[RMDB]
This 207-nucleotide RNA was probed chemically with 2A3.
RNA sequence: GGGAACGACUCGAGUAGAGUCGAAAAACUCGGCGCUCCGGUAAACAGUUGCUGAUGGUUUCCGCUGAAACGCCGCAAGUUGUUGAAACACGUAACGAGUCUGUACGUAGGUUGCUCAAGCAUUUCCGACACGAGUACUUCAUCAACGGUGCAUACCCGAAUACCGUGGUUUCGACCACGGUAUUCGAAAAGAAACAACAACAACAAC
Reactivity to 2A3 in 0.01 (KOAc 150mM, MgCl2 10mM, bicine 150mM(pH8.5), 24C), signal-to-noise 1, nucleotides 027 to 156: a000c010u010c030g010g000c030g000c090u000c010c000g110g040u130a020a030a000c020a090g030u210u200g110c100u050g110a070u120g050g000u010u000u070c010c010g000c040u050g000a220a000a030c020g030c000c000g000c120a100a010g000u000u010g030u030u030g150a090a180a050c050a010c020g010u170a170a010c070g010a030g040u020c060u110g010u100a000c000g000u000a030g100g010u020u100g010c010u050c120a070a080g100c100a180u090u100u060c070c000g050a010c020a030c200g030a030g020u030a030c000u020u020c060a110u070c010a000a110c070g040g010u060g100c030a050u070a100c050c010
Background
Source: RMDB library OK3TST, as collected in RNAgym. The reactions ran in a buffer of 150 mM KOAc, 10 mM MgCl2 and 150 mM bicine (pH 8.5), at 24 C.